[RMDB]
RNA sequence: GGGAACGACUCGAGUAGAGUCGAAAAGAUAUGGACCCGUAACUCGCUUGGAUUUAUGGGAGCGCACACAUCGGAAACGAUGUGGAUCUCCCAUUGUCAGCGAGGAGAAGGGUCCUAAGUCAAAAGUUCUUUGGUCGCUUCGGCGACCAAAGAACAAGGAACUAUUCAAGUUCGCUUGAAUAGUUCCAAAAGAAACAACAACAACAAC
Reactivity to 2A3 in 0.01 (KOAc 150mM, MgCl2 10mM, bicine 150mM(pH8.5), 24C), signal-to-noise 2, nucleotides 027 to 156: g030a030u060a050u130g000g000a010c020c020c000g000u020a020a040c010u010c000g010c060u080u200g250g030a080u300u300u050a010u050g000g010g000a010g010c080g000c000a060c000a010c010a080u010c000g040g030a090a090a050c020g000a000u010g010u010g010g000a020u000c010u020c020c000c000a000u000u000g010u000c000a000g000c000g010a000g000g010a000g000a000a010g010g000g000u000c000c000u020a010a010g010u000c000a000a020a020a080g000u000u000c000u010u000u000g000g000u010c040g020c020u060u100c300g120g000c050g010a010c000c000a000a000a010g000a000a000c000a000a000
An RNA of 207 nucleotides, treated with 2A3 and read out base by base. The data come from the RNA Mapping Database (RMDB), library RNAMAK. 2A3 adducts were read by reverse transcription with SuperScript II with manganese. Conditions: 150 mM KOAc, 10 mM MgCl2 and 150 mM bicine (pH 8.5), 24 C.